[RMDB]
Chemical mapping of a 177-nucleotide RNA with DMS and 2A3. Conditions: 150 mM KOAc, 10 mM MgCl2 and 150 mM bicine (pH 8.5), 24 C. The 2A3 profile rests on 12,227 reads. The data come from the RNA Mapping Database (RMDB), library OK2TST.
RNA sequence: GGGAACGACUCGAGUAGAGUCGAAAAUAUUGGUUCGCUGUCGAUCACACUGGCUACUGCUUGGGUAUCGCUGAAUAACGUCACCCCAGUGCUUGCAGUGAUGUUGGGCUUGGCGGUGGGUAUCGACCGGCUAAGGAUAAUUCGUUAUCCUUAGCCGAAAAGAAACAACAACAACAAC
Reactivity to DMS in 0.01 (KOAc 150mM, MgCl2 10mM, bicine 150mM(pH8.5), 24C), signal-to-noise 7, nucleotides 027 to 126: u020a120u000u000g010g010u000u000c030g020c050u010g010u000c020g000a040u000c050a150c030a060c020u000g030g020c010u010a060c240u000g010c050u000u000g020g010g020u010a040u000c020g010c030u000g000a100a070u010a080a050c070g010u020c080a280c030c030c030c060a180g000u010g020c110u000u010g010c030a030g010u010g010a030u000g010u000u010g010g010g000c030u000u010g010g010c020g010g020u000g010g000g020u000a030u000c030g010a040c050
Reactivity to 2A3 in 0.01 (KOAc 150mM, MgCl2 10mM, bicine 150mM(pH8.5), 24C), signal-to-noise 6, nucleotides 027 to 126: u210a060u040u110g050g000u040u050c030g000c070u040g020u030c010g020a010u010c010a010c000a000c060u070g300g000c020u050a040c070u070g040c010u040u040g190g000g010u060a010u030c000g000c020u030g040a080a100u170a120a010c060g040u060c080a070c010c010c010c020a030g020u030g080c040u040u100g000c000a010g010u000g020a040u010g040u030u070g020g000g000c050u020u040g010g020c020g010g020u030g010g020g000u130a030u070c010g010a010c010